[RMDB]
RNA sequence: GGGAACGACUCGAGUAGAGUCGAAAAACGCGCUGCGUCAAAGAUCGGUGAUUGGCGGCUCGAAGCCUUUUACCCUGCAGCCAAUGUGAGCGGAUUCUAGCAGGGUUUUAUAGAUCGUCAACACUAUCAAUCACAGUCAGUUCGCUGACUGUGAUUGAAAAGAAACAACAACAACAAC
Reactivity to DMS in 0.01 (KOAc 150mM, MgCl2 10mM, bicine 150mM(pH8.5), 24C), signal-to-noise 2, nucleotides 027 to 126: a170c050g020c070g000c040u020g030c020g010u020c070a050a090a060g010a070u000c080g010g020u000g000a110u000u000g000g000c000g000g000c060u010c100g000a100a060g000c060c070u010u000u040u000a060c020c000c010u000g030c000a080g030c160c080a100a050u050g020u030g010a150g000c100g010g010a180u000u030c100u010a160g010c020a000g000g010g010u000u000u000u000a050u010a050g010a080u030c020g000u000c060a020a000c020a040c030u010a160u000
Reactivity to 2A3 in 0.01 (KOAc 150mM, MgCl2 10mM, bicine 150mM(pH8.5), 24C), signal-to-noise 2, nucleotides 027 to 126: a000c030g050c000g020c050u110g000c000g030u030c040a050a060a040g030a180u110c080g010g010u030g010a300u020u010g010g000c000g010g010c040u020c070g090a060a020g020c000c000u040u060u020u030a010c000c000c000u000g000c000a010g000c000c030a100a110u260g060u150g140a060g060c100g000g040a130u230u090c040u050a040g010c010a000g000g010g000u030u000u000u000a050u010a010g050a020u050c010g010u020c010a020a000c020a000c010u050a070u100
This 177-nucleotide RNA was probed chemically with DMS and 2A3. For 2A3 the reverse transcriptase was SuperScript II with manganese.